Annotation: This 207-nucleotide RNA was probed chemically with 2A3. For 2A3, 584 sequencing reads were counted. The data come from the RNA Mapping Database (RMDB), library M2RFPK. The reactions ran in a buffer of 150 mM KOAc, 10 mM MgCl2 and 150 mM bicine (pH 8.5), at 24 C.

RNA sequence: GGGAACGACUCGAGUAGAGUCGAAAAAGAGGCGAUACGUCGCCUCAAACUUGGUGCUUAGCUUCUUUCACCAAGCAUAUUACACGCGGAUAACCGCCAAAGGAGAAACACUGACUACGGUCAGUGAGGAAGUUGGUUCGGUUCGCCGAACCAACAAUCACUACUGCGGGUUCGCCCGCAGUAGUGAAAAAGAAACAACAACAACAAC
Reactivity to 2A3 in 0.01 (KOAc 150mM, MgCl2 10mM, bicine 150mM(pH8.5), 24C), signal-to-noise 1, nucleotides 027 to 156: a000g010a020g000g020c000g010a000u010a030c030g090u020c000g040c000c000u000c000a000a000a000c000u000u020g020g000u000g020c030u040u040a020g070c010u050u000c010u010u010u020c000a010c000c000a000a010g010c040a000u070a050u260u260a160c070a050c000g020c000g000g040a030u040a260a300c020c000g000c010c030a020a000a010g040g000a040g000a010a070a000c010a000c000u000g000a000c010u030a010c240g070g000u000c000a000g020u020g000a000g020g080a110a150g000u000u020g000g000u010u030c020g130g010u030u010c160g020c090c000g000a000a000c000c000a000a000c000a000a020